[RMDB]
RNA sequence: GGGAACGACUCGAGUAGAGUCGAAAAGAUAUGGAUUGCCACUCUCUGAUGACCUACGUCGGAAACGACGUAGCAAGGAGGUGGACAAUCCUAAGUCAAAACUCCUGACUCUUCGGAGUCAGGAGAACCAAGGUGAAACCUUCGGGUUUCACCUUGGAAAAGAAACAACAACAACAAC
Reactivity to DMS in 0.01 (KOAc 150mM, MgCl2 10mM, bicine 150mM(pH8.5), 24C), signal-to-noise 1, nucleotides 027 to 126: g020a080u000a300u000g040g030a050u000u000g010c000c000a020c010u030c110u000c020u010g010a090u000g000a190c300c000u000a000c010g050u030c010g000g020a230a140a190c000g020a050c010g000u000a000g010c020a010a040g020g020a020g020g000u000g000g000a050c000a020a010u030c000c000u020a000a040g000u030c010a140a140a170a150c000u020c000c000u000g010a000c000u000c000u000u000c180g030g000a030g000u000c010a000g000g000a010g000a020a120
Reactivity to 2A3 in 0.01 (KOAc 150mM, MgCl2 10mM, bicine 150mM(pH8.5), 24C), signal-to-noise 1, nucleotides 027 to 126: g030a010u010a090u230g010g000a000u040u000g020c000c010a010c000u300c010u030c000u090g300a300u110g000a240c000c000u000a000c000g000u020c000g000g000a100a070a040c000g010a000c010g000u000a010g000c010a060a240g010g000a010g010g050u040g010g070a010c000a000a000u010c000c010u000a100a000g030u000c050a030a020a050a190c000u000c000c000u000g000a000c000u000c050u080u130c300g130g000a010g000u000c000a010g010g000a010g010a020a000